[RMDB]
Conditions: 150 mM KOAc, 10 mM MgCl2 and 150 mM bicine (pH 8.5), 24 C. Chemical mapping of a 177-nucleotide RNA with DMS and 2A3. It was measured as part of the RMDB library TTRDEL. Values cover nucleotides 27 to 126.
RNA sequence: GGGAACGACUCGAGUAGAGUCGAAAAGAUAUGGACAUCGAUCUGCGAACUACUCCGAGGUUCGGAAACGAACCGAGGAGCGCAGGGAGUCCUAAGUCAAACUAGAACAUCUUCGGAUGUUCUAGAACAGUCAUUAACGCUUCGGCGUUAAUGACUGAAAAGAAACAACAACAACAAC
Reactivity to DMS in 0.01 (KOAc 150mM, MgCl2 10mM, bicine 150mM(pH8.5), 24C), signal-to-noise 1, nucleotides 027 to 126: g020a080u000a300u000g000g000a030c020a080u010c110g000a120u000c000u000g000c000g080a130a080c070u010a300c000u000c000c030g000a260g000g000u030u000c000g000g000a060a100a180c000g000a000a000c000c000g000a240g000g000a000g000c060g010c000a050g000g000g000a050g020u000c000c000u000a020a120g020u000c020a050a050a200c010u000a000g000a000a010c030a000u000c000u000u030c160g070g010a000u000g000u000u000c000u000a000g000a120a140
Reactivity to 2A3 in 0.01 (KOAc 150mM, MgCl2 10mM, bicine 150mM(pH8.5), 24C), signal-to-noise 1, nucleotides 027 to 126: g060a000u110a080u170g000g000a010c060a260u180c130g120a130u000c010u020g030c010g000a130a090c040u200a050c000u210c000c070g050a050g030g000u030u000c020g030g020a050a010a030c010g000a000a000c000c000g000a030g000g200a010g000c000g000c000a020g010g000g050a010g020u050c020c000u020a180a000g030u000c040a090a050a140c020u010a010g000a040a010c050a000u000c000u110u080c300g120g010a000u000g050u000u000c000u010a000g000a020a000